[RMDB]
RNA sequence: GGGAACGACUCGAGUAGAGUCGAAAAUGAGGAAUUGAAGGACAAAACUGAAGAUGUUGAUCAACGGAAGGAUUCAGUGGACUCUAUCGCAGACCAAUUUUCAACAUUUAAUAUUGGUCCCACAAGAUGACUGGGUAAAUUUCGAUUUACCCAGUCAAAAAGAAACAACAACAACAAC
Reactivity to 2A3 in 0.01 (KOAc 150mM, MgCl2 10mM, bicine 150mM(pH8.5), 24C), signal-to-noise 2, nucleotides 027 to 126: u050g020a050g040g000a050a040u080u080g020a140a040g040g000a040c030a060a080a030a060c020u030g000a020a010g070a070u090g040u190u080g050a090u070c040a000a070c020g120g010a030a030g040g000a030u010u000c000a040g010u020g060g040a010c000u000c030u050a050u100c010g080c100a000g040a030c010c020a000a000u020u030u060u100c040a100a090c020a130u140u170u150a120a060u070a080u130u020g000g000u000c020c000c060a060c000a000a040g160a070
Reactivity to DMS in 0.01 (KOAc 150mM, MgCl2 10mM, bicine 150mM(pH8.5), 24C), signal-to-noise 4, nucleotides 027 to 126: u010g010a120g000g010a120a050u010u000g000a090a300g010g010a070c050a040a120a080a080c070u000g010a040a090g000a100u010g010u010u010g000a100u000c090a050a160c100g020g010a040a180g010g020a110u010u000c030a030g050u000g010g010a240c120u000c040u010a080u010c120g000c130a100g000a080c050c020a020a020u000u010u010u000c070a040a050c030a030u010u000u000a050a060u000a080u010u000g000g000u000c000c000c040a090c180a050a080g000a100
The record gives the reactivity of an RNA of 177 nucleotides to 2A3 and DMS. The reactions ran in a buffer of 150 mM KOAc, 10 mM MgCl2 and 150 mM bicine (pH 8.5), at 24 C. DMS adducts were read by reverse transcription with MarathonRT.